RNA sequence: GGGAACGACUCGAGUAGAGUCGAAAAGCGUACUACUGAAUCACGCGAGGAAGCCGUUGAAAGAGCCUCCCCACCGUUUCCCAAAUAGGAAACGAGGGCUCUGGAGGCUUCCUCGAUUCAGUAUCGCAAAACCAGGAAUCGUUCGCGAUUCCUGGAACCUUGGUUCUAUGUUCGCAUAGAACCAAGGAAAAGAAACAACAACAACAAC
Reactivity to DMS in 0.01 (KOAc 150mM, MgCl2 10mM, bicine 150mM(pH8.5), 24C), signal-to-noise 1, nucleotides 027 to 156: g070c020g030u000a070c020u020a020c010u010g000a030a020u020c050a160c090g110c060g030a040g030g030a040a030g000c020c010g000u000u000g000a250a100a120g000a010g020c000c020u010c300c250c060c030a300c120c030g000u000u000u000c000c000c010a070a170a260u000a060g020g000a020a030a020c010g010a190g000g020g020c000u000c040u010g000g000a190g040g010c000u000u000c000c000u000c040g000a020u000u000c000a030g060u000a010u020c020g080c000a090a070a120a200c020c000a030g000g010a030a000u000c000g070u000u010c300g050c030g000a040u000u000c000c000u010g000g020a000a010
Reactivity to 2A3 in 0.01 (KOAc 150mM, MgCl2 10mM, bicine 150mM(pH8.5), 24C), signal-to-noise 2, nucleotides 027 to 156: g000c010g020u120a140c060u020a000c000u000g000a010a010u040c030a030c150g210c070g020a020g000g000a010a010g000c010c030g120u200u040g060a050a040a010g000a000g000c000c010u050c070c020c000c000a050c000c010g000u010u000u000c000c000c040a090a300a140u240a110g000g000a020a000a000c010g000a030g020g000g010c010u000c000u010g000g010a020g000g000c000u000u000c000c000u000c000g000a000u000u000c000a000g000u000a000u300c010g000c000a040a090a010a130c020c010a000g000g010a000a000u000c000g000u100u070c300g040c000g090a000u010u000c010c000u010g000g010a000a000